[RMDB]
RNA sequence: GGGAACGACUCGAGUAGAGUCGAAAACGCAUGCGAAAGCAUGCGGCUAUGCUAAUGCAUGGCGACCCCGAUCAUGUUGACCUAGGGGCGUAUGUGGUUAUUAUUCCGCAUACGAUUACCAGUGUCUGUUAUUAUUCAGAUACAUGGAAGUCAACGAGCAUCAGUCACUAUUCGUAGUGACUGAUGCAAAAGAAACAACAACAACAAC
Reactivity to 2A3 in 0.01 (KOAc 150mM, MgCl2 10mM, bicine 150mM(pH8.5), 24C), signal-to-noise 2, nucleotides 027 to 156: c000g000c000a010u000g000c000g050a090a010a080g020c000a000u000g000c000g000g000c010u000a000u000g020c030u300a300a040u300g000c010a000u000g000g000c020g040a100c000c020c000c010g020a040u140c030a090u150g020u070u000g020a000c000c030u040a050g000g000g000g030c010g000u000a000u000g040u010g000g110u040u030a170u240u010a120u300u110c000c030g000c000a000u000a000c000g000a010u000u050a120c000c010a000g000u010g000u020c000u000g090u020u050a290u150u020a130u030u070c000a000g010a000u000a000c030a050u000g000g020a030a010g000u000c000a000a000c000g000a030
The record gives the reactivity of an RNA of 207 nucleotides to 2A3. Values cover nucleotides 27 to 156. The RNA was probed in 150 mM KOAc, 10 mM MgCl2 and 150 mM bicine (pH 8.5) at 24 C. 2A3 adducts were read by reverse transcription with SuperScript II with manganese. It was measured as part of the RMDB library OK3TST.